[RMDB]
RNA sequence: GGGAACGACUCGAGUAGAGUCGAAAAUUUACGGUAUUCGUACCGUAAACGAGCAAGCAAGCAGCGCAACGAGACAAGACGAUAUUAAGAUCGAGCAUGCUGAUAGUAGGAUCUUCGGAUCCUACAAUUAAACACCGGAUUUCGAUCCGGUGUUUAAAAAAGAAACAACAACAACAAC
Reactivity to DMS in 0.01 (KOAc 150mM, MgCl2 10mM, bicine 150mM(pH8.5), 24C), signal-to-noise 3, nucleotides 027 to 126: u000u000u000a000c010g000g000u010a020u000u010c190g030u000a010c000c000g030u000a000a010a010c110g020a160g020c080a080a070g010c050a070a060g020c010a020g000c070g010c040a050a050c060g000a060g000a070c090a060a050g000a150c050g010a090u020a100u000u010a100a090g010a080u000c000g000a120g020c080a090u000g010c050u020g010a090u010a080g030u000a010g000g000a000u000c000u000u010c250g000g000a000u000c000c000u000a010c000a010a070
Reactivity to 2A3 in 0.01 (KOAc 150mM, MgCl2 10mM, bicine 150mM(pH8.5), 24C), signal-to-noise 1, nucleotides 027 to 126: u010u000u000a000c000g000g010u030a020u020u040c120g030u020a040c000c000g000u010a000a000a000c010g030a010g080c020a080a000g050c010a010a040g000c000a000g110c040g000c070a080a050c060g050a020g040a140c030a050a040g050a060c060g020a060u050a060u240u250a120a060g040a090u040c010g000a010g060c020a040u060g000c040u040g080a070u070a060g000u010a030g000g010a000u030c000u010u030c190g030g000a000u000c010c020u000a000c000a000a000